[RMDB]
RNA sequence: GGGAACGACUCGAGUAGAGUCGAAAAUAGGAAUCUGCCCUAUCUGGUGUCUGGGCCUCACGUGAUUCCUGCAUCAUUUCCACUCCUGGUUAUGAAUGUUUUGCUGCGAAUCACCAUGGUGGGACGUUUUCCUCACAUUCACAGGCACAGGACUGUGGCAAAGUUAAAUGUUCGCAUUUAACUUUGCAAAAGAAACAACAACAACAAC
Reactivity to 2A3 in 0.01 (KOAc 150mM, MgCl2 10mM, bicine 150mM(pH8.5), 24C), signal-to-noise 7, nucleotides 027 to 156: u100a000g030g040a040a100u050c060u090g060c020c000c000u030a060u050c060u070g070g010u040g050u030c030u040g030g150g010c010c020u060c010a060c060g010u020g000a010u010u010c000c000u000g000c010a030u020c000a010u010u020u020c020c020a060c100u130c050c140u090g020g000u060u050a030u100g050a090a040u060g080u100u250u160u120g050c020u030g030c080g030a010a010u000c000a010c020c020a070u130g070g000u020g010g020g010a010c030g040u040u010u080u080c020c010u070c010a050c010a080u130u130c030a010c000a050g010g000c030a020c000a130g040g060a040c040u050g010u060g090
Reactivity to DMS in 0.01 (KOAc 150mM, MgCl2 10mM, bicine 150mM(pH8.5), 24C), signal-to-noise 2, nucleotides 027 to 156: u010a060g000g010a090a060u010c050u010g010c020c000c000u000a080u000c030u000g020g040u010g020u010c040u000g010g040g010c040c030u000c070a130c060g020u010g010a040u000u000c000c020u000g000c040a080u000c020a030u000u000u020c030c020a090c100u000c180c100u000g030g020u000u000a060u000g030a060a130u010g020u010u010u010u000g030c040u000g050c090g000a060a100u000c020a000c020c090a090u000g010g030u000g000g010g020a090c100g000u000u010u000u010c010c020u030c080a060c070a100u000u010c020a050c010a050g000g010c050a070c050a090g000g030a110c050u010g020u000g000